RNA sequence: GGGAACGACUCGAGUAGAGUCGAAAAUCUGGCCAAUGGAACAAUGUAGGCAAGGGAAGUCGGCAAAACGGAUCCGUAACUUCGGGAAAAGGAUUGGCUCUGAGGGUUGGGCUCGGGGGUCCCGGCCGUAGUAUUGGGACUUCGGUCCCAAUACUACAAAAGAAACAACAACAACAAC
Reactivity to DMS in 0.01 (KOAc 150mM, MgCl2 10mM, bicine 150mM(pH8.5), 24C), signal-to-noise 4, nucleotides 027 to 126: u010c010u000g030g000c010c030a100a070u000g000g000a140a080c170a080a120u000g020u030a060g010g000c060a100a070g000g010g000a070a040g000u020c000g020g000c120a040a070a090a090c120g000g000a120u010c010c000g010u050a120a140c070u000u010c080g010g010g030a040a040a110a080g000g010a030u010u010g000g010c030u010c030u020g020a120g010g000g020u000u020g000g000g000c030u010c050g020g000g010g000g010u000c000c010c020g000g010c080c050
Reactivity to 2A3 in 0.01 (KOAc 150mM, MgCl2 10mM, bicine 150mM(pH8.5), 24C), signal-to-noise 5, nucleotides 027 to 126: u010c010u050g020g000c020c020a060a090u080g010g020a060a050c060a080a080u180g020u140a070g050g000c090a030a060g060g020g000a020a040g040u040c010g000g030c040a050a070a080a120c080g070g010a040u010c000c000g030u040a050a080c030u080u070c040g050g020g040a070a090a000a060g060g020a050u060u080g040g000c050u020c040u090g070a070g010g060g010u090u110g050g030g000c050u050c020g050g010g000g010g000u030c030c000c000g010g000c020c020